[RMDB]
RNA sequence: GGGAACGACUCGAGUAGAGUCGAAAAAUGGCGUAUCCUCUGCCGCCUCACACGCAUCACGCCGCUCGGUACGUGUUUCGGCAGACAACGUGCCGGCACGAAGCGCCCUUGCGAAGGCUGACCGCAGGGAUGGGGAGUGAUUCGUCACUCCCCAUCCAAAAGAAACAACAACAACAAC
Reactivity to DMS in 0.01 (KOAc 150mM, MgCl2 10mM, bicine 150mM(pH8.5), 24C), signal-to-noise 2, nucleotides 027 to 126: a070u000g000g000c050g020u000a100u000c010c050u040c040u030g000c050c020g030c030c000u010c070a050c060a050c060g030c010a070u020c040a130c080g030c090c090g000c090u020c050g030g000u010a100c010g000u000g020u000u020u010c000g060g000c050a040g000a090c260a100a110c100g010u000g040c000c030g000g000c030a040c020g010a140a140g010c020g010c030c000c020u010u000g000c050g000a240a080g000g000c040u000g000a040c080c020g000c040a120g000

Chemical mapping of a 177-nucleotide RNA with DMS. The RNA was probed in 150 mM KOAc, 10 mM MgCl2 and 150 mM bicine (pH 8.5) at 24 C. Source: RMDB library OK1LIB, as collected in RNAgym.